[RMDB]
RNA sequence: GGGAACGACUCGAGUAGAGUCGAAAAAUUAGUAGACUAAUCACAGGAGUGACAGCCCAUCACAUUCACAGGUUCUGCCCACCCUCAAGGACAGAGGACUAUCAAGAGCAUGGACCACAGGGGAGACUUCUGCCUGCACAACCUCGUAAUUGGUAGACCAUUAAGCAAGUUUCGACUUGCUUAAUGGAAAAGAAACAACAACAACAAC
Reactivity to 2A3 in 0.01 (KOAc 150mM, MgCl2 10mM, bicine 150mM(pH8.5), 24C), signal-to-noise 5, nucleotides 027 to 156: a000u160u120a020g050u030a040g060a060c040u060a050a020u100c050a030c040a120g030g040a060g040u040g040a030c020a020g030c010c000c000a050u080c030a020c020a060u140u100c060a060c030a100g020g010u040u010c010u030g020c010c020c010a060c030c010c000u010c060a060a090g070g030a030c040a040g010a020g020g020a010c020u060a060u190c090a070a040g020a000g050c010a020u110g000g010a010c010c000a030c050a050g020g000g010g000a080g040a020c010u030u000c020u050g060c010c010u040g000c040a030c020a110a080c020c020u070c060g050u060a060a050u070u070g020g000u030a010g030a040
Reactivity to DMS in 0.01 (KOAc 150mM, MgCl2 10mM, bicine 150mM(pH8.5), 24C), signal-to-noise 3, nucleotides 027 to 156: a070u000u010a060g010u020a100g020a140c020u010a080a040u010c040a120c030a130g020g020a220g010u010g000a060c070a100g010c120c020c020a110u040c070a100c060a140u010u000c070a060c070a100g040g000u000u000c020u000g000c000c010c010a070c010c010c040u010c050a050a080g010g010a080c060a090g010a100g030g030a120c060u000a100u000c090a100a110g020a150g030c040a070u000g010g000a120c020c030a050c060a050g000g030g030g020a140g000a100c100u010u000c040u000g030c010c000u010g080c030a050c020a050a090c020c010u000c030g050u020a050a080u000u000g000g020u010a080g000a120